[RMDB]
RNA sequence: GGGAACGACUCGAGUAGAGUCGAAAAGAAAUUCAUAUGUUGAAGUCUUAACUCUCAAAGUGAUGGUAUUUGUAGAUGGGGUCUUUGGGAGGUAUGAUUAGGGCAUAAGAAUAGAGCCCUCACAAAUAGGAUUAGUGCUCUUAUUAAAGAGGUUCCACCUUCUACAGGCAUUCGUGCCUGUAGAAGGAAAAGAAACAACAACAACAAC
Reactivity to 2A3 in 0.01 (KOAc 150mM, MgCl2 10mM, bicine 150mM(pH8.5), 24C), signal-to-noise 1, nucleotides 027 to 156: g050a010a100a000u110u050c040a020u100a040u110g040u040u080g150a280a040g000u000c000u030u020a030a010c010u020c000u000c010a060a000a020g060u110g140a120u150g110g130u190a160u060u300u150g130u130a090g020a120u090g060g000g000g000u000c000u000u030u000g000g000g000a000g050g020u040a010u110g030a030u000u150a040g010g020g100c040a020u030a080a060g050a030a020u070a110g050a000g070c030c010c000u000c000a120c010a000a050a050u090a020g040g000a010u110u040a020g070u080g090c000u040c000u000u040a120u050u110a090a120a000g030a070g050g000u080u060c050c000a040